Overview: Structure probing data (DMS) for a 177-nucleotide construct. Conditions: 150 mM KOAc, 10 mM MgCl2 and 150 mM bicine (pH 8.5), 24 C. Reactivities are rounded to 0.1 and cut off at 0 and 3. It was measured as part of the RMDB library TTRINS. For DMS the reverse transcriptase was MarathonRT.
RNA sequence: GGGAACGACUCGAGUAGAGUCGAAAAGAUAUGGACCCUAUUGCUUUAGACCACUAGGCAACAGCCACGGGUCGGAAACGACCCAGUGGACAUGCCUAUUGGUCUAAAGCAAUAGGGUCCUAAGUCACCCUAAAUAUGUGUUCGCACAUAUUUAGGGAAAAGAAACAACAACAACAAC
Reactivity to DMS in 0.01 (KOAc 150mM, MgCl2 10mM, bicine 150mM(pH8.5), 24C), signal-to-noise 3, nucleotides 027 to 126: g000a040u000a300u000g020g010a030c010c010c000u000a000u000u000g000c000u000u000u000a000g000a010c000c000a010c080u010a000g000g000c010a040a130c300a260g000c000c010a010c010g010g000g000u000c000g000g000a110a120a220c010g010a000c000c000c000a080g080u000g010g010a010c100a120u000g010c000c000u000a010u000u000g000g020u000c000u000a000a000a000g010c000a000a000u010a000g010g010g020u000c010c010u000a020a080g010u010c050a300